[RMDB]
An RNA of 207 nucleotides, treated with 2A3 and DMS and read out base by base.
DMS adducts were read by reverse transcription with MarathonRT.
The data come from the RNA Mapping Database (RMDB), library OK3TST.
The DMS profile rests on 6,937 reads.
For 2A3, 2,658 sequencing reads were counted.
RNA sequence: GGGAACGACUCGAGUAGAGUCGAAAAGGAAGAGUACAUCACCGGUGGAGCAGACGUGAUUUUUGGGACAACAUUUGGCUUUAUGGAUCCAAUAGCCGAACUAUCACCGGAAUACCCAGACACGGUUUUUGAGCACUGUUCAGGAUUCAAAACAACGAUGGCAAUUAGUAUUCGUACUAAUUGCCAUAAAAGAAACAACAACAACAAC
Reactivity to 2A3 in 0.01 (KOAc 150mM, MgCl2 10mM, bicine 150mM(pH8.5), 24C), signal-to-noise 4, nucleotides 027 to 156: g080g030a060a030g030a010g060u100a060c040a100u070c030a030c050c000g020g010u030g010g020a030g030c090a010g060a050c020g010u020g100a180u020u040u060u070u090g030g020g040a030c030a100a000c010a100u030u040u090g070g010c010u040u080u180a070u140g020g030a050u060c000c010a030a020u040a040g030c030c000g000a020a010c040u050a060u220c020a010c030c000g020g000a020a010u070a060c000c010c010a000g040a010c040a010c040g040g060u030u020u030u090u180g020a020g010c010a020c080u020g040u090u070c060a020g000g030a060u080u070c020a020a050a040a020c080a060a010c080g110
Reactivity to DMS in 0.01 (KOAc 150mM, MgCl2 10mM, bicine 150mM(pH8.5), 24C), signal-to-noise 3, nucleotides 027 to 156: g000g010a070a090g010a110g040u000a070c080a110u020c110a140c040c000g040g040u000g040g000a080g030c060a110g020a090c050g030u000g020a230u000u010u010u010u000g020g000g020a070c040a040a040c070a080u000u000u000g020g020c070u010u000u000a050u000g010g020a130u000c010c020a060a080u010a110g010c020c010g000a060a060c050u010a080u000c050a070c020c030g000g000a100a090u000a090c020c010c010a230g010a110c050a080c050g010g010u000u000u000u000u000g000a090g030c120a100c070u010g000u000u000c060a120g020g010a130u000u010c030a030a070a070a080c060a060a090c100g010